[RMDB]
RNA sequence: GGGAACGACUCGAGUAGAGUCGAAAAGUAAAGGCCGAACGAGCGCUAAUGCCCAUGCUAGAAAAUGGUAGGCCAUCGUAGUGUGAGCAUGAGCACGAAAGAAACACACACAUGCACGUGCAAAAAAUAGUAUACAACACUUCGGUGUUGUAUACUAAAAAGAAACAACAACAACAAC
Reactivity to 2A3 in 0.01 (KOAc 150mM, MgCl2 10mM, bicine 150mM(pH8.5), 24C), signal-to-noise 3, nucleotides 027 to 126: g020u040a000a070a090g090g000c040c020g010a070a040c040g020a030g030c050g000c070u020a070a010u060g010c000c000c000a000u030g010c010u060a040g100a120a120a020a010u080g030g060u060a100g090g200c030c010a010u050c020g080u020a040g000u000g000u000g040a000g000c000a010u030g030a020g000c020a010c040g070a050a080a020g120a030a080a000c060a000c010a010c010a010c000a070u080g050c070a040c090g020u050g020c020a030a090a020a030a000a030
Reactivity to DMS in 0.01 (KOAc 150mM, MgCl2 10mM, bicine 150mM(pH8.5), 24C), signal-to-noise 4, nucleotides 027 to 126: g010u010a070a100a120g010g010c010c020g010a090a110c120g010a120g030c060g000c030u000a060a050u010g010c030c010c010a040u020g000c030u000a040g000a040a110a090a060u000g000g000u000a100g020g000c020c020a020u000c080g010u010a060g050u020g040u000g000a050g020c010a020u000g010a040g000c020a070c020g000a070a060a080g000a080a050a030c080a070c080a080c080a030c080a060u000g000c040a090c120g010u000g010c070a000a020a050a050a060a090
This 177-nucleotide RNA was probed chemically with 2A3 and DMS.
The 2A3 profile rests on 3,712 reads.
2A3 adducts were read by reverse transcription with SuperScript II with manganese.
The RNA was probed in 150 mM KOAc, 10 mM MgCl2 and 150 mM bicine (pH 8.5) at 24 C.
For DMS the reverse transcriptase was MarathonRT.